[RMDB]
RNA sequence: GGGAACGACUCGAGUAGAGUCGAAAAGUGGAAGGAAGAGAGGCCUUUGGUCUCGAAGACUUCAUACGUAGGUAUAGUACCAUCAGAAACUGGUGUCGAAGGUGUCUCCUCCAUAAUUGGUAAUUAACAUUAAAAGCCCAUUCGUGGGCUUUUAAUGAAAAGAAACAACAACAACAAC
Reactivity to 2A3 in 0.01 (KOAc 150mM, MgCl2 10mM, bicine 150mM(pH8.5), 24C), signal-to-noise 4, nucleotides 027 to 126: g100u090g010g100a080a050g040g060a130a010g030a000g010a000g040g000c010c010u140u130u220g050g000u020c000u010c020g020a020a000g010a020c020u020u010c010a040u080a130c060g120u090a060g200g000u070a160u040a140g090u100a080c020c020a020u090c020a030g070a090a160a060c030u030g030g000u010g050u070c010g030a070a000g020g050u060g070u050c010u000c020c020u040c000c000a060u140a170a080u180u110g020g000u090a040a080u020u090a040a090
Reactivity to DMS in 0.01 (KOAc 150mM, MgCl2 10mM, bicine 150mM(pH8.5), 24C), signal-to-noise 4, nucleotides 027 to 126: g000u020g020g010a070a040g000g010a030a040g010a300g010a010g010g010c000c000u010u010u050g020g040u010c000u030c040g000a120a080g000a110c020u000u000c010a050u050a020c040g000u050a080g000g010u020a050u000a100g010u020a070c070c020a040u020c070a070g000a090a110a100c080u000g000g000u010g000u010c030g010a060a090g020g000u010g010u010c030u000c020c000u000c030c020a070u020a060a100u040u020g000g000u010a060a150u000u010a070a240
This 177-nucleotide RNA was probed chemically with 2A3 and DMS. Values are in units of 0.01, from 0 to 300, in steps of 10. Reactivities are given for positions 27 through 126. For DMS the reverse transcriptase was MarathonRT. Conditions: 150 mM KOAc, 10 mM MgCl2 and 150 mM bicine (pH 8.5), 24 C. The data come from the RNA Mapping Database (RMDB), library OK1LIB.